[RMDB]
RNA sequence: GGGAACGACUCGAGUAGAGUCGAAAACGACUUGGUCGCCGCCAUCCAGAAACAGCUCGCCGAUCCGGCUGUCGCGCGGCGAAACAUGUUGCGUGCGUGGGAAUCCCGGCUUCUGAUGGUCGCGCGGCACAGGACUGGAGUUCGCUCCAGUCCUGUGAAAAGAAACAACAACAACAAC
Reactivity to 2A3 in 0.01 (KOAc 150mM, MgCl2 10mM, bicine 150mM(pH8.5), 24C), signal-to-noise 4, nucleotides 027 to 126: c030g060a030c040u050u120g050g020u030c020g020c020c000g000c010c010a060u050c080c070a020g060a060a090a050c060a050g110c060u150c130g040c030c010g060a030u050c010c020g090g010c050u060g090u140c010g000c000g020c000g030g000c010g040a010a010a010c070a060u220g000u020u020g030c030g000u030g010c030g040u110g020g060g030a070a110u120c070c030c000g020g000c030u030u020c010u040g020a030u040g030g010u080c020g000c010g000c000g040g000
Reactivity to DMS in 0.01 (KOAc 150mM, MgCl2 10mM, bicine 150mM(pH8.5), 24C), signal-to-noise 2, nucleotides 027 to 126: c070g000a100c070u020u010g030g000u010c000g000c020c010g000c020c020a040u020c100c120a070g010a050a100a070c140a090g010c020u000c080g030c060c090g000a050u000c030c020g010g000c010u000g040u000c000g000c030g000c010g000g010c000g000a020a100a090c130a080u020g020u000u030g000c020g020u000g040c030g010u000g020g020g000a080a080u030c010c030c060g010g000c020u000u000c010u000g010a060u000g010g010u010c090g010c090g000c050g000g000
Chemical mapping of a 177-nucleotide RNA with 2A3 and DMS. It was measured as part of the RMDB library OK1LIB. The reactions ran in a buffer of 150 mM KOAc, 10 mM MgCl2 and 150 mM bicine (pH 8.5), at 24 C. In probing experiments dimethyl sulfate is read out at A N1 and C N3, which are open when not base-paired. DMS adducts were read by reverse transcription with MarathonRT. Values are in units of 0.01, from 0 to 300, in steps of 10. The DMS profile rests on 4,714 reads.